This 170-nucleotide RNA was probed chemically with DMS and 2A3. The reactions ran in a buffer of 150 mM KOAc, 10 mM MgCl2 and 150 mM bicine (pH 8.5), at 24 C. For DMS the reverse transcriptase was MarathonRT. For 2A3, 6,216 sequencing reads were counted. As a SHAPE reagent, 2A3 marks flexible, mostly unpaired nucleotides at the ribose 2'-OH. It was measured as part of the RMDB library 15KLIB.

RNA sequence: GGGAACGACUCGAGUAGAGUCGAAAAGAAGGAGGAAGGAGCUCUCGAACGCUCUCCCGACCGCUCGGAUGGGCCGCUUCCGGCAAGAGGGGCCGAAAGUGUGAAGGGAGAGACCGCUCCGAGAGUUGAGCUGCGUCCUUCGGGACGCAGAAAAGAAACAACAACAACAAC
Reactivity to DMS in 0.01 (KOAc 150mM, MgCl2 10mM, bicine 150mM(pH8.5), 24C), signal-to-noise 5, nucleotides 027 to 129: g030a040a000g020g010a020g020g020a080a020g040g000a050g040c000u010c010u010c030g010a110a090c080g000c050u010c040u010c010c030c000g030a300c160c070g000c050u010c040g070g070a200u080g000g030g050c040c040g010c030u010u010c000c050g000g060c260a080a130g030a010g000g020g010g050c030c030g020a060a050a030g100u050g010u090g000a100a250g000g000g000a000g020a020g040a070c140c100g010c000u010c070c000g010a010g000a090g010u010u040g020a050g010
Reactivity to 2A3 in 0.01 (KOAc 150mM, MgCl2 10mM, bicine 150mM(pH8.5), 24C), signal-to-noise 4, nucleotides 027 to 129: g020a000a000g010g010a000g000g000a010a020g010g020a020g000c000u030c000u000c000g000a050a000c010g010c000u000c000u010c020c000c000g000a060c060c020g050c020u020c020g240g100a200u150g090g030g000c000c020g110c090u040u000c010c010g020g000c000a030a020g030a010g050g070g020g000c000c010g050a060a070a060g010u040g040u080g060a060a070g010g020g010a000g000a000g010a010c030c080g030c050u000c050c000g000a000g000a000g010u030u100g020a050g020